An RNA of 177 nucleotides, treated with 2A3 and DMS and read out base by base. The DMS profile rests on 4,058 reads. 2A3 is a SHAPE reagent: it acylates the 2'-hydroxyl of flexible nucleotides of all four kinds. DMS adducts were read by reverse transcription with MarathonRT.

[RMDB]
RNA sequence: GGGAACGACUCGAGUAGAGUCGAAAAGAUUUGGGAACUAUCGGAUUACCCAAGGGUUCAGUGCACUCGGCCGAGGUAUAUAAUUUUAGAGAGCUUUUCUCAUCACUUGGCUUGGCCCUAGCAACAGCUUACAGGCAGUGUUCGCACUGCCUGUAAGAAAAGAAACAACAACAACAAC
Reactivity to 2A3 in 0.01 (KOAc 150mM, MgCl2 10mM, bicine 150mM(pH8.5), 24C), signal-to-noise 4, nucleotides 027 to 126: g070a040u120u120u160g070g010g000a080a040c080u100a140u120c050g120g040a090u060u210a250c010c050c040a040a040g080g020g000u050u170c090a130g030u040g140c110a050c160u050c080g030g000c000c030g010a010g000g060u020a040u020a020u030a200a210u030u160u090u080a070g030a010g010a000g130c090u070u090u200u020c000u010c010a080u010c020a040c070u010u050g010g010c000u000u060g030g020c000c010c010u040a070g020c080a000a020c020a040g030
Reactivity to DMS in 0.01 (KOAc 150mM, MgCl2 10mM, bicine 150mM(pH8.5), 24C), signal-to-noise 3, nucleotides 027 to 126: g010a110u030u030u000g000g020g050a090a120c060u000a100u010c070g000g020a230u020u030a190c010c000c010a050a060g000g000g000u010u000c090a100g030u010g000c050a070c060u040c200g000g020c000c020g030a050g020g000u030a050u030a080u040a090a080u010u020u010u030a080g010a050g010a070g030c160u020u050u030u000c000u000c010a050u020c190a050c120u000u000g010g020c000u010u000g000g010c000c010c030u000a080g000c080a080a030c170a100g000